[RMDB]
RNA sequence: GGGAACGACUCGAGUAGAGUCGAAAAUAAACGUAAGGAGUAGUAUAUAGGGAUUGCGCCUUGAUGGAGGAGAUUCCGGUUCGAAUCCGGGCUAUUACGUCUAAGACAUCUAUUUGUAAAUAGGUGUUUUUAGAAAAGACUUCGGUCUUUUCUAAAAAAAAGAAACAACAACAACAAC
Reactivity to 2A3 in 0.01 (KOAc 150mM, MgCl2 10mM, bicine 150mM(pH8.5), 24C), signal-to-noise 4, nucleotides 027 to 126: u030a000a070a000c020g010u010a020a000g080g110a010g080u030a000g020u000a040u020a040u110a090g210g080g020a040u010u070g000c010g000c030c010u080u090g090a170u150g230g030a020g010g000a010g010a010u060u000c000c010g000g000u000u010c010g000a010a000u020c010c020g000g020g020c010u030a050u100u030a030c020g020u010c080u080a070a030g030a010c000a000u000c000u030a060u010u100u200g230u210a060a070a020u000a010g000g000u010g000u010
Reactivity to DMS in 0.01 (KOAc 150mM, MgCl2 10mM, bicine 150mM(pH8.5), 24C), signal-to-noise 5, nucleotides 027 to 126: u040a060a080a070c040g010u010a030a050g010g000a050g010u000a060g000u010a030u020a050u010a130g000g010g010a040u000u000g000c030g020c020c010u000u000g010a150u030g010g010a050g000g000a070g000a040u010u000c000c000g010g000u000u010c040g000a300a050u000c010c030g000g000g010c050u000a030u010u010a040c060g000u010c060u020a100a100g010a030c000a000u000c000u000a010u010u010u030g000u010a040a020a040u000a010g000g010u000g000u010